[RMDB]
RNA sequence: GGGAACGACUCGAGUAGAGUCGAAAAGUGGAGAACAGAUGUCACCAGCACUUUAAUAAAGAUGCAUGGUUGAAACAGUUUAACAAUGGCCUGGUGGCUCAAACUGGAAAUUUAGGUGCAGAAGAAAUAGUAUCCGUCUGUUCGCAGACGGAUACUAAAAAGAAACAACAACAACAAC
Reactivity to 2A3 in 0.01 (KOAc 150mM, MgCl2 10mM, bicine 150mM(pH8.5), 24C), signal-to-noise 2, nucleotides 027 to 126: g110u070g000g050a060g050a090a000c060a030g020a090u090g040u020c000a000c010c010a000g000c000a000c000u040u000u050a130a080u110a160a110a000g060a040u120g000c100a080u020g120g000u060u120g030a020a110a020c010a010g000u000u020u130a040a050c040a160a000u050g000g050c000c010u080g070g090u130g010g090c030u020c030a060a110a000c010u010g120g050a010a030a030u190u240u050a070g080g020u020g000c000a010g050a070a000g020a000a080a010
Reactivity to DMS in 0.01 (KOAc 150mM, MgCl2 10mM, bicine 150mM(pH8.5), 24C), signal-to-noise 2, nucleotides 027 to 126: g000u000g000g000a290g000a050a010c070a100g000a110u010g080u010c010a000c000c000a000g000c020a050c030u000u000u000a200a070u010a100a050a030g010a120u000g020c000a020u000g000g010u010u020g010a030a120a040c090a110g030u000u030u000a000a170c060a060a050u020g000g020c080c010u000g020g030u000g010g010c000u000c130a030a030a020c040u010g020g010a030a090a000u010u040u070a060g010g000u000g010c050a030g000a110a140g030a060a090a260
An RNA of 177 nucleotides, treated with 2A3 and DMS and read out base by base. For DMS, 2,022 sequencing reads were counted. As a SHAPE reagent, 2A3 marks flexible, mostly unpaired nucleotides at the ribose 2'-OH. It was measured as part of the RMDB library OK1LIB. For DMS the reverse transcriptase was MarathonRT. The reactions ran in a buffer of 150 mM KOAc, 10 mM MgCl2 and 150 mM bicine (pH 8.5), at 24 C. The 2A3 profile rests on 1,005 reads.